Background: Conditions: 150 mM KOAc, 10 mM MgCl2 and 150 mM bicine (pH 8.5), 24 C. The record gives the reactivity of an RNA of 177 nucleotides to 2A3 and DMS.
[RMDB]
RNA sequence: GGGAACGACUCGAGUAGAGUCGAAAAGAUCAAGCCCCGCAAGUUCGGUGACUCGGUCGCGCCGCUCGCGCUGGUGGUCGGCUCCAUCCGCACAUCGAUCUUCGACGUCGCCGCACCGAUCCUGGAGCAGCAUAACAAUCUUCGGAUUGUUAUGCUGAAAAGAAACAACAACAACAAC
Reactivity to 2A3 in 0.01 (KOAc 150mM, MgCl2 10mM, bicine 150mM(pH8.5), 24C), signal-to-noise 3, nucleotides 027 to 126: g080a030u140c100a120a100g040c000c000c000c000g000c050a040a060g040u040u060c010g010g030u030g040a070c050u010c080g030g010u070c020g030c020g000c040c010g050c050u060c010g070c000g030c050u050g060g000u030g020g020u040c050g090g000c050u010c050c010a060u030c000c010g040c010a030c010a070u070c010g070a050u010c000u110u080c070g020a040c040g020u070c040g020c010c000g020c010a020c020c010g010a030u040c000c020u040g040g000a020g070
Reactivity to DMS in 0.01 (KOAc 150mM, MgCl2 10mM, bicine 150mM(pH8.5), 24C), signal-to-noise 5, nucleotides 027 to 126: g000a120u000c140a140a140g000c010c010c010c090g000c110a130a080g000u000u000c020g000g020u000g010a100c170u010c040g010g000u010c140g030c080g020c040c030g020c120u010c060g010c160g020c070u000g000g020u010g010g010u000c060g000g000c080u010c050c090a060u000c020c030g000c090a070c060a060u010c050g000a060u000c070u000u000c030g010a020c040g030u000c100g000c040c020g020c070a060c030c010g000a050u000c030c020u000g010g010a150g020